The record gives the reactivity of an RNA of 177 nucleotides to 2A3 and DMS.
High 2A3 reactivity points to a flexible backbone, as in loops and unpaired stretches.

RNA sequence: GGGAACGACUCGAGUAGAGUCGAAAACUUGUACGAAUCACUCUUGAACGAACUUAAAAUUGCAUCAUACGUCACGGUAGGUUUCGUCUUGCUGUGCGUACGUUGCACACCAAUUAUAGUGGAGCUUUGAACUCUAAAGUUUCGACUUUAGAGUUCAAAAAGAAACAACAACAACAAC
Reactivity to 2A3 in 0.01 (KOAc 150mM, MgCl2 10mM, bicine 150mM(pH8.5), 24C), signal-to-noise 8, nucleotides 027 to 126: c040u060u180g060u080a030c030g060a080a060u080c010a010c040u040c020u050u100g050a120a040c040g030a040a030c030u120u120a070a020a080a150u160u070g000c000a000u000c000a020u010a020c030g040u070c290a000c010g010g000u010a000g000g040u100u280u200c140g090u070c060u000u010g000c010u000g000u000g000c010g000u000a010c020g010u010u010g000c030a020c010a010c010c030a090a140u190u060a100u050a110g100u050g050g020a020g040c020u010u020
Reactivity to DMS in 0.01 (KOAc 150mM, MgCl2 10mM, bicine 150mM(pH8.5), 24C), signal-to-noise 2, nucleotides 027 to 126: c130u000u000g030u000a170c050g050a090a080u000c060a090c010u010c040u000u000g010a130a050c070g000a020a160c080u010u000a040a050a110a130u020u020g040c010a000u000c000a090u000a020c010g010u010c010a000c000g000g010u010a030g000g010u000u000u020c100g000u030c000u020u000g000c030u000g000u000g000c000g000u020a000c080g000u000u000g000c000a050c300a090c050c120a020a070u010u000a050u010a100g040u000g000g010a170g010c140u000u000